[RMDB]
RNA sequence: GGGAACGACUCGAGUAGAGUCGAAAAACCGGAGGCCGACAAUCCAGGGAACCGGAUGUCAUCACGUUGUUGCAGUACCAGAUGGCAUCUUUAAUCCGAUCUGCAAAUAAGCAUGUAGAAAGCUGAUAAAAUCACACACACUUCGGUGUGUGUGAAACACGUAUUUAUGGUUCGCCAUAAAUACGUGAAAAGAAACAACAACAACAAC
Reactivity to DMS in 0.01 (KOAc 150mM, MgCl2 10mM, bicine 150mM(pH8.5), 24C), signal-to-noise 3, nucleotides 027 to 156: a110c000c020g010g010a120g010g010c050c030g010a110c050a070a120u000c090c030a110g020g020g010a110a120c050c070g000g010a010u010g010u000c010a030u010c050a230c200g020u000u000g010u000u000g000c020a100g030u010a080c060c060a140g020a020u000g010g010c010a030u000c010u000u000u000a110a140u000c030c030g000a130u000c030u000g030c040a030a080a140u000a090a110g020c080a100u000g020u000a090g010a060a070a080g010c030u010g010a130u000a050a070a100a160u000c000a010c000a000c000a010c010a000c000u000u010c300g080g000u000g000u000g000u000g020u010g010a020a030a100
Reactivity to 2A3 in 0.01 (KOAc 150mM, MgCl2 10mM, bicine 150mM(pH8.5), 24C), signal-to-noise 4, nucleotides 027 to 156: a000c020c000g010g020a040g010g040c030c020g030a040c060a050a070u080c010c030a040g030g030g000a060a050c040c020g000g000a000u010g010u010c000a000u010c030a030c190g060u060u050g060u060u040g020c070a060g030u100a130c060c020a030g000a010u000g010g000c000a000u000c000u010u080u050a060a040u010c030c000g050a080u030c000u030g010c000a000a060a100u130a090a030g040c060a050u100g010u050a030g100a130a080a010g010c050u030g050a010u100a100a130a010a020u030c010a000c000a000c000a000c000a000c000u040u100c200g060g000u000g000u000g010u000g000u000g000a010a000a000